This 177-nucleotide RNA was probed chemically with DMS and 2A3. As a SHAPE reagent, 2A3 marks flexible, mostly unpaired nucleotides at the ribose 2'-OH. The reactions ran in a buffer of 150 mM KOAc, 10 mM MgCl2 and 150 mM bicine (pH 8.5), at 24 C. The data come from the RNA Mapping Database (RMDB), library OK2TRN.
RNA sequence: GGGAACGACUCGAGUAGAGUCGAAAACAGAGCCCGUUCAUGGGUGAUGGCGUGCCUUUUGUAGAAUGAACCGGCGAGUUACGGUCCCAUGCAAGGUUAAGCUGAAAAAGCGGAGCCGCAGCGAAAGGUCCUUUAUACUCUUCGGAGUAUAAAGGACAAAAGAAACAACAACAACAAC
Reactivity to DMS in 0.01 (KOAc 150mM, MgCl2 10mM, bicine 150mM(pH8.5), 24C), signal-to-noise 5, nucleotides 027 to 126: c050a080g020a300g000c000c000c090g000u000u010c090a080u000g010g020g030u010g000a080u000g000g010c110g030u000g010c060c020u000u000u010u010g020u000a070g010a120a060u000g010a060a040c030c170g010g000c020g030a130g010u000u000a100c110g020g000u000c010c020c030a110u010g030c030a050a110g000g010u010u000a080a290g000c020u010g000a080a070a070a130a060g000c000g000g030a260g010c010c010g000c140a220g000c030g020a050a070a130g010
Reactivity to 2A3 in 0.01 (KOAc 150mM, MgCl2 10mM, bicine 150mM(pH8.5), 24C), signal-to-noise 3, nucleotides 027 to 126: c020a000g120a020g100c020c000c000g030u130u090c080a080u120g000g000g130u090g070a120u120g100g070c060g110u080g020c040c030u050u150u090u180g120u090a080g040a300a100u090g010a060a030c020c000g020g000c010g020a020g010u050u060a060c060g020g060u010c020c000c000a050u120g000c010a040a030g000g000u040u050a010a020g000c010u040g100a100a100a120a020a020g000c000g000g000a000g020c020c020g030c070a010g020c010g020a080a020a000g080